[RMDB]
RNA sequence: GGGAACGACUCGAGUAGAGUCGAAAAGCCGCCUUCAACCUCUCCCGGUGUCUCUUCUCUCGCUUCCUCCCUCCUCAUUUUGCUCCUGAUCAUUUCUGCCAAGGGAGUCUGAGCCCUUGGGUUGAAGACAUCUUACGUUGUUCGCAACGUAAGAUGUAAAAGAAACAACAACAACAAC
Reactivity to DMS in 0.01 (KOAc 150mM, MgCl2 10mM, bicine 150mM(pH8.5), 24C), signal-to-noise 2, nucleotides 027 to 126: g010c040c020g010c060c020u010u010c030a080a100c020c010u000c070u020c020c030c040g000g020u010g020u000c040u000c040u000u000c030u000c040u000c060g000c060u010u000c030c010u000c030c010c020u010c010c020u020c030a050u000u000u000u000g010c070u000c010c020u000g010a090u000c080a100u010u000u010c020u000g010c020c010a000a010g000g000g000a090g000u000c150u000g010a140g000c000c000c010u000u010g000g010g020u010u000g020a070a090g010
Chemical mapping of a 177-nucleotide RNA with DMS. The DMS profile rests on 3,034 reads. It was measured as part of the RMDB library VIROID.